An RNA of 207 nucleotides, treated with DMS and 2A3 and read out base by base.
The reactions ran in a buffer of 150 mM KOAc, 10 mM MgCl2 and 150 mM bicine (pH 8.5), at 24 C.
For DMS the reverse transcriptase was MarathonRT.
The data come from the RNA Mapping Database (RMDB), library OK3TST.
[RMDB]
RNA sequence: GGGAACGACUCGAGUAGAGUCGAAAAGUGGUGCCGAUUUAUUUGAUGUAUCGACGCCUAUAUCAGGUUACUCAUUUUAACCGCAAACUGUUGCAAAAACGUUUAUUAUUAACCUUGAUUGAAACCUUAUUAAUGGGACUGGUCGUGUUUGUGGCCACCGCAUAUUACUCUUCGGAGUAAUAUGCGGAAAAGAAACAACAACAACAAC
Reactivity to DMS in 0.01 (KOAc 150mM, MgCl2 10mM, bicine 150mM(pH8.5), 24C), signal-to-noise 1, nucleotides 027 to 156: g050u010g020g000u000g000c040c010g030a040u000u010u000a110u010u010u000g040a210u000g000u000a070u000c000g050a020c010g000c010c020u000a130u000a100u010c050a050g010g020u010u000a070c210u020c190a080u000u000u000u000a010a120c040c000g010c050a080a060a160c100u000g010u010u000g020c050a080a100a060a090a040c070g000u010u010u000a080u040u000a100u010u000a010a050c040c030u000u010g040a120u000u000g050a110a050a090c010c070u000u000a140u000u010a020a070u010g010g020g010a070c040u000g000g030u000c030g030u000g000u000u000u010g010u010g040g000c020c010a090
Reactivity to 2A3 in 0.01 (KOAc 150mM, MgCl2 10mM, bicine 150mM(pH8.5), 24C), signal-to-noise 3, nucleotides 027 to 156: g140u040g010g000u010g030c030c000g010a000u040u150u090a190u080u200u170g180a140u160g020u150a020u020c000g000a010c000g040c020c030u050a060u000a000u140c010a010g000g000u010u020a040c040u000c060a070u050u090u030u140a050a040c050c050g020c040a030a070a120c190u280g130u160u080g020c030a030a120a050a080a050c030g010u020u070u040a100u070u020a030u040u030a030a000c010c010u030u160g030a020u020u020g020a060a010a030c010c000u090u120a150u190u270a220a100u200g030g030g060a070c050u060g020g000u020c050g010u050g070u130u160u140g030u060g000g000c010c010a010